[RMDB]
RNA sequence: GGGAACGACUCGAGUAGAGUCGAAAAUCACUGUUUUGUUUGUAGUUCGAGAUUGGGUGUUAGAUUUUGAUCUCGUGCAUCCGUUUGAACAAGCUAUGCUUAUGGCUAGUUAUAGUGACUCCAGCCGGCUCAUAUCACUGUUCGCAGUGAUAUGAGCAAAAGAAACAACAACAACAAC
Reactivity to DMS in 0.01 (KOAc 150mM, MgCl2 10mM, bicine 150mM(pH8.5), 24C), signal-to-noise 2, nucleotides 027 to 126: u020c020a100c080u000g010u020u000u010u000g000u000u000u040g030u010a110g050u000u000c000g000a000g000a050u040u040g000g000g010u010g070u000u010a060g040a090u000u010u040u030g010a040u010c050u010c300g000u000g000c000a000u000c020c020g030u010u020u010g000a000a040c000a110a080g000c020u030a030u040g000c020u000u070a080u000g000g020c040u000a030g000u000u000a050u040a050g000u030g000a030c100u010c080c060a060g020c110c080g000
Reactivity to 2A3 in 0.01 (KOAc 150mM, MgCl2 10mM, bicine 150mM(pH8.5), 24C), signal-to-noise 3, nucleotides 027 to 126: u030c000a010c110u030g130u030u090u020u080g210u150u060u090g120u110a130g010u040u070c080g020a030g000a110u160u300g040g010g000u000g030u060u260a050g050a100u160u050u050u120g100a080u000c030u010c040g050u070g000c000a000u000c050c020g000u000u000u110g010a010a000c010a000a030g000c050u080a040u300g000c000u090u240a150u300g050g000c020u010a000g030u110u030a060u010a160g080u060g040a040c020u050c030c000a000g070c090c020g000

An RNA of 177 nucleotides, treated with DMS and 2A3 and read out base by base. Values cover nucleotides 27 to 126. Values are in units of 0.01, from 0 to 300, in steps of 10. It was measured as part of the RMDB library OK1LIB. The reactions ran in a buffer of 150 mM KOAc, 10 mM MgCl2 and 150 mM bicine (pH 8.5), at 24 C.